[RMDB]
Background:
Conditions: 150 mM KOAc, 10 mM MgCl2 and 150 mM bicine (pH 8.5), 24 C. This 207-nucleotide RNA was probed chemically with 2A3. It was measured as part of the RMDB library ARCHII. The 2A3 profile rests on 716 reads. 2A3 adducts were read by reverse transcription with SuperScript II with manganese.

RNA sequence: GGGAACGACUCGAGUAGAGUCGAAAAACCUAAACAUACACGCCAACGACAGAGAGAUGGCGCUGGCUGCCUAAAACCACUGGCAGCCCGUCGGUCCGGGCGGCCCACGGCCCGGUUUCCGGCGUCGGUUAGUGGGCUUACCUCCCGGGCUCCGGCCCUCAAUUAAACGGUUCGCCGUUUAAUUGAGAAAAGAAACAACAACAACAAC
Reactivity to 2A3 in 0.01 (KOAc 150mM, MgCl2 10mM, bicine 150mM(pH8.5), 24C), signal-to-noise 2, nucleotides 027 to 156: a000c050c010u070a120a110a010c040a040u300a050c080a000c070g020c000c000a110a020c070g160a050c130a130g250a020g020a030g030a110u010g010g010c000g000c030u000g010g000c000u010g000c000c000u160a250a220a090a080c050c040a080c140u030g000g000c000a000g010c020c000c000g020u010c000g000g000u040c000c000g000g000g030c030g030g020c000c000c000a030c000g000g010c000c020c010g000g040u020u100u070c020c000g010g060c030g040u120c020g050g000u050u070a090g010u070g000g000g000c000u010u090a100c010c000u030c040c000c010g000g020g000c030u060c070c040g010g020c030c000